Annotation
Chemical mapping of a 177-nucleotide RNA with 2A3. The data come from the RNA Mapping Database (RMDB), library OK1LIB. 2A3 adducts were read by reverse transcription with SuperScript II with manganese. The reactions ran in a buffer of 150 mM KOAc, 10 mM MgCl2 and 150 mM bicine (pH 8.5), at 24 C. For 2A3, 1,608 sequencing reads were counted. High 2A3 reactivity points to a flexible backbone, as in loops and unpaired stretches.
RNA sequence: GGGAACGACUCGAGUAGAGUCGAAAAGAAGCGAAAGCGAAAGCACGAAUACGGCGGAAUAAAAGUGCAAGCUACUCGGAUGGACCGCCGAUAUAAAAUAAAAACAUCGAAGAGUAGCGAAAGAAAAGGGAAUAGUGUUGUUCGCAACACUAUUCCCAAAAGAAACAACAACAACAAC
Reactivity to 2A3 in 0.01 (KOAc 150mM, MgCl2 10mM, bicine 150mM(pH8.5), 24C), signal-to-noise 2, nucleotides 027 to 126: g050a050a010g050c090g060a150a010a000g000c000g120a020a110a060g010c020a020c150g000a000a050u160a050c000g000g000c000g010g000a050a050u010a000a220a000a000g110u060g190c040a010a010g050c000u000a000c000u000c020g220g000a020u060g030g010a000c000c000g000c000c000g020a000u000a000u020a020a030a000a050u210a020a010a000a000a000c000a010u020c080g150a110a090g000a030g020u000a000g000c020g000a080a060a010g040a000a020a010a020